[RMDB]
Annotation: This 207-nucleotide RNA was probed chemically with 2A3. It was measured as part of the RMDB library PDB130. The RNA was probed in 150 mM KOAc, 10 mM MgCl2 and 150 mM bicine (pH 8.5) at 24 C. 2A3 adducts were read by reverse transcription with SuperScript II with manganese.
RNA sequence: GGGAACGACUCGAGUAGAGUCGAAAAGCACCAAUUUGAAGAGCAGCGAACGGGUGAGUAACGCGUGGGGAAUCUGCCUUUGAGCGGGGGACAACAUUUGGAAACGAAUGCUAAUACCGCAUAAUAACUUUAAACAUAAGUUUUAAGUUUGAAAGAUACUCGCAAAUUAGUUCGCUAAUUUGCGAGUAAAAGAAACAACAACAACAAC
Reactivity to 2A3 in 0.01 (KOAc 150mM, MgCl2 10mM, bicine 150mM(pH8.5), 24C), signal-to-noise 1, nucleotides 027 to 156: g050c020a050c070c000a070a060u180u060u230g130a050a020g020a020g020c120a000g050c040g080a090a020c030g010g040g000u020g020a070g020u140a050a040c080g000c000g080u010g000g080g000g020a000a110u020c020u070g020c000c000u080u090u180g000a050g030c020g000g000g000g000g020a000c040a050a000c000a010u000u000u050g000g010a000a020a080c090g000a010a040u110g000c000u010a000a000u050a170c000c000g020c020a000u050a180a000u120a050a030c030u030u030u140a010a020a020c100a100u250a260a050g000u000u000u010u010a020a000g000u040u090u110g090a090a020a000g040a020u070